[RMDB]
RNA sequence: GGGAACGACUCGAGUAGAGUCGAAAAAGCGUAAUAGCACCAGAGAAAUUCUUAUUACUGCUGCUUAAAAUAAAUUUCGCGUUAUCAGAAACGGUGAUUCUUUCACCAUGAAUUGCCGGAUCGUUCAGGUUAUAUCGUUAUUCGUAACGAUAUAACCAAAAGAAACAACAACAACAAC
Reactivity to 2A3 in 0.01 (KOAc 150mM, MgCl2 10mM, bicine 150mM(pH8.5), 24C), signal-to-noise 7, nucleotides 027 to 126: a000g000c010g000u030a040a020u030a100g000c010a000c030c020a010g030a010g050a050a130a050u270u100c080u150u210a180u120u120a100c000u020g020c010u000g020c010u050u050a060a110a050a040u150a050a150a070u100u120u060c020g000c010g060u090u070a090u170c070a050g030a020a040a010c000g000g000u010g000a000u020u000c010u050u170u150c110a090c040c010a010u060g000a000a000u000u000g000c000c000g010g000a020u030c010g010u060u100c050a020
Reactivity to DMS in 0.01 (KOAc 150mM, MgCl2 10mM, bicine 150mM(pH8.5), 24C), signal-to-noise 6, nucleotides 027 to 126: a100g020c020g010u010a080a060u010a070g010c020a030c100c020a030g020a180g020a100a080a090u000u020c150u000u010a090u000u010a100c010u000g010c280u000g010c020u000u000a050a100a100a120u000a030a090a090u000u000u000c030g010c020g010u010u010a080u010c100a140g000a010a060a220c020g000g010u000g000a010u010u000c020u000u000u010c230a110c280c130a040u000g010a020a020u000u000g010c000c000g000g000a160u000c020g010u010u010c140a110
Overview:
This 177-nucleotide RNA was probed chemically with 2A3 and DMS. The data come from the RNA Mapping Database (RMDB), library OK2TST. The RNA was probed in 150 mM KOAc, 10 mM MgCl2 and 150 mM bicine (pH 8.5) at 24 C. For DMS, 6,084 sequencing reads were counted. The 2A3 profile rests on 9,416 reads.